[RMDB]
RNA sequence: GGGAACGACUCGAGUAGAGUCGAAAAAUAGUGUUAUUCGUAACACUAUAUAUCCGAACUCAUGGAUUCGUUCCAGAGACAUGCAUGCUAGCAUGAAAGCAACUGAACAAGCGUUCGCGCUUGUUAAACGAUGAUGAGACUUCGGUCUCAUCAUCGUAAAAGAAACAACAACAACAAC
Reactivity to DMS in 0.01 (KOAc 150mM, MgCl2 10mM, bicine 150mM(pH8.5), 24C), signal-to-noise 2, nucleotides 027 to 126: a000u000a010g030u010g000u000u000a030u010u010c160g010u000a000a000c000a010c000u010a020u000a020u000a080u000c110c010g010a050a070c000u010c000a100u000g000g010a010u000u000c010g010u000u000c010c000a110g030a180g000a200c040a000u000g000c020a110u020g050c170u010a130g010c040a010u000g000a100a140a150g000c100a030a060c120u000g010a050a030c010a010a020g010c000g020u000u020c180g010c020g040c020u000u010g000u000u000a030a060
Reactivity to 2A3 in 0.01 (KOAc 150mM, MgCl2 10mM, bicine 150mM(pH8.5), 24C), signal-to-noise 2, nucleotides 027 to 126: a010u000a000g010u000g010u000u010a060u020u070c220g030u050a010a000c000a000c000u000a000u000a000u000a000u000c060c020g010a160a030c010u000c000a040u090g080g010a000u000u020c040g020u040u000c010c010a000g020a000g010a130c030a000u010g020c000a000u170g120c080u140a040g000c000a010u020g030a050a040a010g050c050a040a150c100u150g060a020a000c030a000a020g020c010g010u010u040c170g010c020g000c070u030u000g000u000u000a050a090